[RMDB]
RNA sequence: GGGAACGACUCGAGUAGAGUCGAAAAGCUAGUCGGAGACGACUAGCAACGAUCAGUUCGCUGAUCGGAAGGUGCAUUCAAAUACGCUAGAAGCACCAAAACACGACGCCUAGCGUAAAACUGAGAAAGCAGAUAACAAAAAUAAAAAGGCGUCGGGCUAUGAGCGUAGGUUCGCCUACGCUCAUAGAAAAGAAACAACAACAACAAC
Reactivity to 2A3 in 0.01 (KOAc 150mM, MgCl2 10mM, bicine 150mM(pH8.5), 24C), signal-to-noise 1, nucleotides 027 to 156: g010c000u020a020g000u000c010g000g010a010g020a060c000g000a010c010u000a000g000c000a010a000c000g000a000u000c000a000g050u040u120c140g000c120u000g000a000u000c000g000g000a090a080g000g030u000g020c050a260u020u020c000a000a030a090u110a020c000g000c050u000a020g010a050a000g000c000a020c040c000a000a040a000a080c050a000c030g020a000c000g000c000c010u030a000g000c020g000u020a130a000a000a070c050u090g040a080g120a250a180a000g110c030a000g020a140u160a050a110c020a110a220a000a020a020u220a060a050a150a000a000g000g000c000g000u000c000g000g010g060
Overview:
The data come from the RNA Mapping Database (RMDB), library OK3TST. The record gives the reactivity of an RNA of 207 nucleotides to 2A3. 2A3 adducts were read by reverse transcription with SuperScript II with manganese. The 2A3 profile rests on 529 reads.